[RMDB]
RNA sequence: GGGAACGACUCGAGUAGAGUCGAAAAGCGUACUACGAUCUCGGGUUACAGGGAGAAGACUGACGGUACUUAAUCCCAAAUAGGAUUAAGGACGAAACCUUCGAAGAACUGUAAUCUCUAGCGUGGAUCGUAUCGCAAACACUAGUUCGCUAGUGAACUUUACUGAUCGGUUCGCCGAUCAGUAAAGAAAAGAAACAACAACAACAAC
Reactivity to 2A3 in 0.01 (KOAc 150mM, MgCl2 10mM, bicine 150mM(pH8.5), 24C), signal-to-noise 5, nucleotides 027 to 156: g000c010g060u170a140c040u000a000c040g020a010u020c030u030c000g000g000g000u000u030a010c010a010g000g020g010a040g000a020a010g010a010c030u120g090a020c030g050g010u300a010c000u000u000a000a020u050c030c030c010a210a300a160u300a100g000g000a000u000u000a000a000g000g020a000c000g000a030a030a010c000c000u000u000c020g160a230a050g010a040a020c010u010g000u000a010a010u000c070u020c060u120a050g090c070g080u180g020g010a000u010c010g000u010a030u300c000g000c000a040a050a000c000a000c000u000a000g030u090u040c170g040c140u000a000g000u020g030a020a010
Reactivity to DMS in 0.01 (KOAc 150mM, MgCl2 10mM, bicine 150mM(pH8.5), 24C), signal-to-noise 1, nucleotides 027 to 156: g000c020g010u010a050c180u000a010c010g000a060u010c020u000c030g030g000g050u000u000a010c000a010g020g040g000a240g040a030a010g040a000c010u000g000a170c010g010g000u000a060c000u000u000a010a020u020c000c000c010a040a170a280u000a080g000g030a000u010u020a020a010g000g020a100c000g020a080a100a150c210c000u010u030c000g000a070a080g020a190a150c000u000g000u000a010a010u010c000u000c100u000a160g010c090g010u010g010g000a060u000c000g000u000a010u000c020g000c000a140a080a090c030a010c030u000a010g010u010u010c220g010c000u000a040g000u000g000a060a160